[RMDB]
RNA sequence: GGGAACGACUCGAGUAGAGUCGAAAAUUCAGCUACUUGGGAGGCUGAGGCAGAAGAAUCGCUUGAACCCAGGAGGUGGAGGUUUCAGUGAGCCAAGAUCGUGCCAUUGCACUCCAGCCUGGGCAACAAGAACAAGACUCCAUCUCAAAAGAAAAGAGCGACCUAAAUAAUUCGUUAUUUAGGUCGCAAAAGAAACAACAACAACAAC
Reactivity to 2A3 in 0.01 (KOAc 150mM, MgCl2 10mM, bicine 150mM(pH8.5), 24C), signal-to-noise 1, nucleotides 027 to 156: u010u030c020a000g000c010u040a020c020u070u030g000g000g000a020g020g050c030u040g010a000g040g000c130a020g040a200a030g010a040a080u130c040g050c050u010u020g020a020a040c020c000c000a010g000g020a050g130g160u060g020g020a030g010g000u050u170u030c000a010g000u000g060a070g000c000c000a020a040g130a260u170c120g110u150g000c000c010a010u020u030g010c070a020c050u000c000c010a040g010c000c000u000g000g020g000c010a010a100c010a000a010g020a070a000c030a080a000g040a080c030u000c050c020a110u030c000u000c020a080a100a030a080g100a060a080a020a020g230a030